Source: RMDB library 15KLIB, as collected in RNAgym. Structure probing data (2A3 and DMS) for a 170-nucleotide construct. The 2A3 profile rests on 62,735 reads. DMS adducts were read by reverse transcription with MarathonRT.
[RMDB]
RNA sequence: GGGAACGACUCGAGUAGAGUCGAAAAGGAGGCGACCGAAGCGAGGGGGAAAGUAAAGAAAGCAACGGGGCUAGCGAGUGGAUGUUCCACCCCCCAGCGGUGCCGAGUGAGGCCUAUCCCGGGGAUCGACGACAUAUGUUCGCAUAUGUCAAAAGAAACAACAACAACAAC
Reactivity to 2A3 in 0.01 (KOAc 150mM, MgCl2 10mM, bicine 150mM(pH8.5), 24C), signal-to-noise 9, nucleotides 027 to 129: g050g010a010g000g010c030g030a050c010c010g030a040a010g040c030g030a070g030g010g010g000g010a050a020a010g060u130a030a050a020g070a050a070a010g040c010a030a060c080g020g000g040g020c030u060a040g030c020g030a040g010u050g030g040a080u120g070u130u060c010c000a030c010c000c000c000c000c000a010g030c020g030g030u060g000c010c020g000a020g020u120g040a040g000g030c010c010u050a060u040c000c000c000g000g010g000g010a060u090c060g050a040c080
Reactivity to DMS in 0.01 (KOAc 150mM, MgCl2 10mM, bicine 150mM(pH8.5), 24C), signal-to-noise 9, nucleotides 027 to 129: g000g000a050g010g020c130g000a040c020c010g020a090a090g020c100g000a020g000g020g030g020g000a040a020a040g010u040a050a070a080g020a070a070a070g030c080a100a130c140g000g000g000g000c090u020a070g030c080g000a040g010u020g000g000a110u000g000u010u010c020c000a070c020c020c010c000c000c030a070g020c110g000g000u010g020c010c030g020a070g000u040g010a030g020g000c040c060u000a070u020c030c000c010g000g000g000g000a060u030c070g000a070c160